[RMDB]
Overview:
Conditions: 150 mM KOAc, 10 mM MgCl2 and 150 mM bicine (pH 8.5), 24 C. An RNA of 177 nucleotides, treated with 2A3 and DMS and read out base by base. The DMS profile rests on 58,152 reads. For DMS the reverse transcriptase was MarathonRT.
RNA sequence: GGGAACGACUCGAGUAGAGUCGAAAAGAAUGUAAGUGCGUAAUCGCGCCUUGACGUGAGUGAGACAAGACAGAACGCUAUCCAAAGUAAGAUAGCAUAGCUCACAAUACGCUGAUCUGUCGUAGAAAGUACUAGUAAUAUUCGUAUUACUAGUACUAAAAGAAACAACAACAACAAC
Reactivity to 2A3 in 0.01 (KOAc 150mM, MgCl2 10mM, bicine 150mM(pH8.5), 24C), signal-to-noise 9, nucleotides 027 to 126: g140a060a030u260g020u250a050a070g030u060g070c010g010u030a070a110u110c040g000c000g010c020c040u080u130g060a090c020g010u020g010a020g000u030g000a020g010a040c070a170a030g010a010c010a020g030a060a010c060g000c000u000a000u000c020c040a180a080a040g150u130a140a050g120a000u000a000g000c010a010u040a010g000c000u000c000a010c000a010a030u120a020c040g000c040u030g030a110u010c000u010g030u020c010g010u030a030g140a070a190
Reactivity to DMS in 0.01 (KOAc 150mM, MgCl2 10mM, bicine 150mM(pH8.5), 24C), signal-to-noise 9, nucleotides 027 to 126: g020a130a070u030g020u020a050a100g020u010g010c000g010u010a070a300u020c050g000c020g010c010c150u040u020g010a140c030g020u000g000a100g000u000g010a030g000a100c090a120a090g000a030c030a030g010a030a110c130g000c000u000a000u000c010c080a070a120a190g030u050a110a110g000a000u000a000g010c000a300u010a040g000c000u000c020a020c030a130a100u010a020c030g000c010u010g010a090u000c010u000g000u000c000g010u030a100g000a080a090
For 2A3 the reverse transcriptase was SuperScript II with manganese.